[RMDB]
RNA sequence: GGGAACGACUCGAGUAGAGUCGAAAACACAUAUCCCUCGCUUAACUACGCUGGGGCUUUGUGGGACAUUACAGUUAUAAACAAUGUGGACAAUGAAAUUGUUAAGUCUUCAGAUGUUGUAGACAGCAGGCUGGGCCGUUCGCGGCCCAGAAAAGAAACAACAACAACAAC
Reactivity to 2A3 in 0.01 (KOAc 150mM, MgCl2 10mM, bicine 150mM(pH8.5), 24C), signal-to-noise 2, nucleotides 027 to 129: c040a000c000a000u050a000u160c000c000c060u040c000g000c030u090u230a150a000c020u150a040c130g000c000u000g000g000g000g010c000u000u000u040g010u090g000g000g170a000c000a000u000u300a030c010a070g070u050u040a280u080a090a170a000c000a000a030u000g000u000g180g090a000c090a020a060u100g040a020a100a160u100u000g100u030u020a210a000g000u000c000u140u120c000a060g030a250u000g030u160u130g000u000a010g050a020c000a000g000c060a060g070g000
Reactivity to DMS in 0.01 (KOAc 150mM, MgCl2 10mM, bicine 150mM(pH8.5), 24C), signal-to-noise 3, nucleotides 027 to 129: c040a020c120a040u030a080u000c000c090c000u000c240g010c040u000u080a020a150c140u000a180c110g000c040u020g070g000g060g060c050u100u000u000g030u030g040g060g000a150c070a020u000u120a060c120a150g070u060u020a040u070a110a060a100c030a080a090u000g050u060g000g000a000c070a080a200u120g000a000a000a000u030u000g040u020u110a130a050g000u010c010u020u150c040a070g000a000u000g020u060u070g050u020a090g030a100c150a090g040c180a100g000g030
Source information:
Chemical mapping of a 170-nucleotide RNA with 2A3 and DMS. The data come from the RNA Mapping Database (RMDB), library 15KLIB. The DMS profile rests on 3,174 reads. The reactions ran in a buffer of 150 mM KOAc, 10 mM MgCl2 and 150 mM bicine (pH 8.5), at 24 C.